[RMDB]
RNA sequence: GGGAACGACUCGAGUAGAGUCGAAAAUGGAUGCAGAAGCUUUCUGUAUGGGAUCAGGCUUCCACUUUGGAAACCCAGCAAGACACCUGUCUUCACGUGGCUCAGUUCCAGGAGUUCCUAAGGAAGAUGUAUGAAGCCUUGAAAGAGAUGGUAAGUAAAGAUUGAGUAGAUUCGUCUACUCAAUCUUAAAAGAAACAACAACAACAAC
Reactivity to DMS in 0.01 (KOAc 150mM, MgCl2 10mM, bicine 150mM(pH8.5), 24C), signal-to-noise 3, nucleotides 027 to 156: u020g020g010a070u010g020c020a040g000a070a300g000c090u000u010u000c020u010g010u000a080u010g020g030g000a100u000c100a050g010g010c010u000u000c010c010a110c170u000u000u020g040g000a040a030a060c010c010c030a140g020c080a080a160g010a050c030a060c070c060u010g010u010c040u000u010c040a070c060g020u010g010g000c030u010c040a180g020u000u000c050c070a140g030g020a190g010u000u000c020c020u000a060a090g000g000a070a050g010a090u000g010u000a080u000g000a060a110g030c000c030u010u010g000a050a080a110g010a130g010a100u010g010g000u000a040a070g000u000a090
Reactivity to 2A3 in 0.01 (KOAc 150mM, MgCl2 10mM, bicine 150mM(pH8.5), 24C), signal-to-noise 4, nucleotides 027 to 156: u120g030g030a010u050g020c000a000g020a130a090g100c050u080u130u000c010u040g030u110a170u080g000g010g040a050u140c080a040g110g000c020u060u000c000c020a060c110u180u100u110g030g010a070a080a090c000c000c000a010g010c040a020a010g040a010c010a030c040c090u110g030u060c010u040u040c030a050c130g070u110g010g000c000u010c110a070g050u110u010c020c010a040g000g000a050g010u050u060c010c000u030a030a010g050g000a020a100g030a070u110g040u090a080u130g040a000a020g000c000c000u030u050g110a140a070a020g040a020g020a040u090g010g030u100a080a060g050u080a070